[RMDB]
Chemical mapping of a 177-nucleotide RNA with 2A3 and DMS.

RNA sequence: GGGAACGACUCGAGUAGAGUCGAAAAGAAAGAAAGAAGCCGGAAUAACGACCACUGAGAAUCUUGAGAGUGGUCUCUAGAUUCGUCUAUGAAGUUAUUGAAGCACGAGAACGGCGAGUGCGAGAAAGGGUAGAUUUAACUUCGGUUAAAUCUACCCAAAAGAAACAACAACAACAAC
Reactivity to 2A3 in 0.01 (KOAc 150mM, MgCl2 10mM, bicine 150mM(pH8.5), 24C), signal-to-noise 3, nucleotides 027 to 126: g020a010a040a000g100a040a070a000g100a090a010g010c020c020g080g130a030a030u010a010a000c030g030a070c000c130a000c050u020g000a010g000a020a010u000c010u030u070g010a020g050a040g050u300g140g140u040c000u000c000u000a000g000a000u000u000c030g020u000c190u000a020u070g010a040a020g000u010u010a040u020u060g100a130a040g010c010a000c030g020a030g040a120a030c010g040g020c020g010a020g000u010g010c030g000a050g110a050a120a030
Reactivity to DMS in 0.01 (KOAc 150mM, MgCl2 10mM, bicine 150mM(pH8.5), 24C), signal-to-noise 3, nucleotides 027 to 126: g000a100a170a070g020a120a080a070g020a120a190g000c000c000g010g010a010a000u000a020a000c020g000a240c280c070a050c120u000g010a170g000a020a010u000c020u000u000g010a000g010a040g000u070g020g000u000c000u000c000u000a000g020a020u000u000c000g000u040c030u020a020u000g000a150a290g000u010u000a000u000u000g010a090a070g000c040a030c040g000a120g000a090a100c040g000g000c030g020a170g000u000g010c000g010a170g000a120a070a100
The reactions ran in a buffer of 150 mM KOAc, 10 mM MgCl2 and 150 mM bicine (pH 8.5), at 24 C. Values are in units of 0.01, from 0 to 300, in steps of 10. For 2A3 the reverse transcriptase was SuperScript II with manganese. It was measured as part of the RMDB library OK1LIB. For DMS the reverse transcriptase was MarathonRT.